Conditions: 150 mM KOAc, 10 mM MgCl2 and 150 mM bicine (pH 8.5), 24 C.
This 207-nucleotide RNA was probed chemically with DMS and 2A3.
It was measured as part of the RMDB library M2RFPK.
DMS adducts were read by reverse transcription with MarathonRT.
For DMS, 1,636 sequencing reads were counted.
RNA sequence: GGGAACGACUCGAGUAGAGUCGAAAACGGCAAAAAAGCAAACUUCACCACCAAGGAUAAAAGAGAUCUUAUCCAAGGAUGCAAAAGAUAAUCUCACUUUUGACACCCACUGAUCUCGAACUUAAAGAAAACCGAGACUACUUCGGUAGUCUCGGAAGAUUUUACUAAGCUUCGGCUUAGUAAAAUCAAAAGAAACAACAACAACAAC
Reactivity to DMS in 0.01 (KOAc 150mM, MgCl2 10mM, bicine 150mM(pH8.5), 24C), signal-to-noise 1, nucleotides 027 to 156: c040g020g020c040a010a100a010a100a050a210g040c070a080a060a140c060u010u000c050a050c050c020a050c020c040a080a270g030g000a150u000a010a050a060a190g020a090g000a080u010c010u000u000a040u010c050c030a200a170g030g000a050u000g000c000a010a040a060a010g030a070u020a060a120u000c090u000c090a090c040u000u010u000u010g000a120c050a020c000c010c020a220c040u000g000a040u000c000u000c030g000a060a090c090u000u000a020a090a090g000a080a050a140a090c030c000g030a090g000a040c000u000a000c000u000u000c240g020g010u000a010g000u000c020u020c020g000g000a000a050
Reactivity to 2A3 in 0.01 (KOAc 150mM, MgCl2 10mM, bicine 150mM(pH8.5), 24C), signal-to-noise 4, nucleotides 027 to 156: c020g050g000c030a030a020a030a050a050a060g060c080a130a110a080c060u120u070c040a060c090c000a040c020c040a060a080g040g000a050u060a090a070a020a010g020a000g000a010u020c020u040u040a030u040c030c020a040a050g020g010a010u040g000c000a000a020a010a030g020a040u150a210a200u140c040u040c110a050c010u040u020u010u010g090a090c010a030c010c020c010a050c120u050g000a010u000c010u000c010g010a080a050c030u150u160a120a070a050g070a040a080a050a010c000c000g000a000g000a000c000u000a000c000u010u040c150g040g000u000a000g000u000c010u010c000g000g000a000a000